[RMDB]
RNA sequence: GGGAACGACUCGAGUAGAGUCGAAAAUUAUACUUGCCAUGACCCUCUGAGUGGAGUGUAAGCAUAGUAUCAAAGAGGGACUAGUUGAUCAGUUCUAUUGGUUGGAGGCCAAAUGGUUAAAUGAAACCGUAUCAUAUGCUUUCGAGCAUAUGAUACGAAAAGAAACAACAACAACAAC
Reactivity to DMS in 0.01 (KOAc 150mM, MgCl2 10mM, bicine 150mM(pH8.5), 24C), signal-to-noise 6, nucleotides 027 to 126: u000u010a110u000a060c080u000u010g010c030c050a100u000g000a140c060c010c020u000c020u000g000a230g020u000g010g010a070g020u000g010u010a070a100g010c070a040u000a060g010u010a060u000c110a080a090a070g010a110g020g010g000a060c060u000a060g020u000u000g000a110u000c100a050g000u000u000c040u000a090u010u010g010g010u000u000g010g010a120g000g000c020c040a030a030a070u000g010g000u000u000a040a060a080u000g010a090a070a090c160
Reactivity to 2A3 in 0.01 (KOAc 150mM, MgCl2 10mM, bicine 150mM(pH8.5), 24C), signal-to-noise 3, nucleotides 027 to 126: u080u010a040u020a090c030u030u090g050c020c010a070u060g040a090c010c050c000u000c010u040g090a060g050u140g040g020a060g010u020g020u060a050a010g020c020a030u050a130g060u060a060u110c060a050a140a000g080a070g020g000g000a000c020u020a010g070u010u080g060a100u090c060a040g030u130u020c020u060a070u060u040g050g010u060u090g030g020a020g080g000c010c000a060a050a050u100g080g000u090u110a070a090a070u070g050a040a020a020c050
Source: RMDB library OK2TST, as collected in RNAgym. An RNA of 177 nucleotides, treated with DMS and 2A3 and read out base by base. For DMS, 6,517 sequencing reads were counted. The reactions ran in a buffer of 150 mM KOAc, 10 mM MgCl2 and 150 mM bicine (pH 8.5), at 24 C. DMS adducts were read by reverse transcription with MarathonRT. The 2A3 profile rests on 3,589 reads.